[RMDB]
RNA sequence: GGGAACGACUCGAGUAGAGUCGAAAAAUAAAGAGCGUAAACGCGUCAUUGAGUGACGUGAAGAUCAUCCAAGUGUGCUGUCUUCAGUCGUAGAUAGCGCACAUUACGCUAAGAUGAUCAUAAAAAAGGUAGUUAAUAUGUUCGCAUAUUAACUACCAAAAGAAACAACAACAACAAC
Reactivity to 2A3 in 0.01 (KOAc 150mM, MgCl2 10mM, bicine 150mM(pH8.5), 24C), signal-to-noise 9, nucleotides 027 to 126: a010u300a020a090a010g090a010g010c010g030u030a030a080a070c030g000c000g010u000c010a030u080u300g210a140g280u030g000a010c000g000u010g070a080a020g000a010u000c000a000u000c030c050a100a090g000u000g000u000g000c000u000g010u000c000u050u050c050a300g100u190c110g010u050a000g000a010u010a000g000c000g000c000a000c000a000u020u040a010c010g000c020u010a010a030g010a000u010g020a000u010c020a060u220a030a120a010a010a010a010
Reactivity to DMS in 0.01 (KOAc 150mM, MgCl2 10mM, bicine 150mM(pH8.5), 24C), signal-to-noise 7, nucleotides 027 to 126: a070u020a050a050a080g010a100g020c010g020u000a030a080a240c070g010c000g000u000c000a040u000u010g020a170g030u010g010a010c000g010u000g010a090a110g000a010u000c000a010u000c010c090a060a070g010u000g020u000g010c000u000g010u000c010u000u010c070a150g020u020c210g010u000a020g010a010u000a000g010c000g010c000a000c010a060u000u000a040c020g010c010u000a080a070g000a020u000g000a020u000c010a150u020a010a040a050a040a080a070
The record gives the reactivity of an RNA of 177 nucleotides to 2A3 and DMS. DMS adducts were read by reverse transcription with MarathonRT. 2A3 adducts were read by reverse transcription with SuperScript II with manganese. The reactions ran in a buffer of 150 mM KOAc, 10 mM MgCl2 and 150 mM bicine (pH 8.5), at 24 C.